[RMDB]
Chemical mapping of a 177-nucleotide RNA with DMS and 2A3. It was measured as part of the RMDB library OK2TST. The reactions ran in a buffer of 150 mM KOAc, 10 mM MgCl2 and 150 mM bicine (pH 8.5), at 24 C.
RNA sequence: GGGAACGACUCGAGUAGAGUCGAAAAGGAAUGAGAAGAACGCACAGAUUCAUACUCGGAAAACAGGAUGGGUCUGUGCCUCUCCAUCAGCGCCCUCAACAGUCUUUGCCGCCGGGGCUCGGUGCGGUGUCAUAUUAGUCUUCGGACUAAUAUGACAAAAAGAAACAACAACAACAAC
Reactivity to DMS in 0.01 (KOAc 150mM, MgCl2 10mM, bicine 150mM(pH8.5), 24C), signal-to-noise 5, nucleotides 027 to 126: g000g010a140a070u000g010a100g010a060a040g000a030a070c300g000c000a010c010a020g010a020u000u000c000a020u000a030c010u000c100g020g020a160a050a150a170c270a010g010g000a030u000g010g000g000u000c010u000g030u000g010c010c030u000c010u000c020c010a070u010c030a050g000c070g010c030c010c010u000c110a070a060c140a070g000u000c040u000u000u010g010c040c010g000c050c070g010g010g000g040c090u010c070g030g030u000g010c040g010g000
Reactivity to 2A3 in 0.01 (KOAc 150mM, MgCl2 10mM, bicine 150mM(pH8.5), 24C), signal-to-noise 3, nucleotides 027 to 126: g060g000a140a060u100g020a060g020a290a050g020a070a000c030g000c000a010c010a000g010a010u020u020c010a000u020a120c040u030c070g090g090a100a150a040a060c050a020g010g020a010u000g000g000g000u000c000u010g000u010g000c000c000u000c000u000c030c010a070u030c030a010g080c010g030c030c020c020u070c000a050a160c000a060g080u010c050u090u130u120g020c030c020g030c030c040g110g020g120g030c120u070c040g000g030u070g020c030g000g040